[RMDB]
RNA sequence: GGGAACGACUCGAGUAGAGUCGAAAAGAUAUGGACGGCCUCUCUGCUCUUGGAUUUAUAAGCGAAACGUUAUCGGAAACGAUAACUGAGUAGCUUAUUGUCAGAGCAAGAGAGGCCGUCCUAAGUCCAUUCCCCACUUCUUCGGAAGUGGGGAAUGAAAAGAAACAACAACAACAAC
Reactivity to DMS in 0.01 (KOAc 150mM, MgCl2 10mM, bicine 150mM(pH8.5), 24C), signal-to-noise 1, nucleotides 027 to 126: g010a190u000a300u020g010g020a020c000g000g000c010c000u020c000u000c010u000g000c010u010c020u010u010g000g010a000u000u010u000a010u000a010a010g020c000g000a130a150a300c300g010u000u000a010u010c000g000g000a190a080a210c010g020a010u000a000a000c000u000g010a060g000u000a170g000c020u000u000a000u000u000g010u000c000a010g010a040g020c000a020a050g010a010g010a000g000g000c000c010g000u000c000c000u010a010a090g020u010c020
Overview
Structure probing data (DMS) for a 177-nucleotide construct. It was measured as part of the RMDB library TTRINS. The reactions ran in a buffer of 150 mM KOAc, 10 mM MgCl2 and 150 mM bicine (pH 8.5), at 24 C. For DMS, 989 sequencing reads were counted.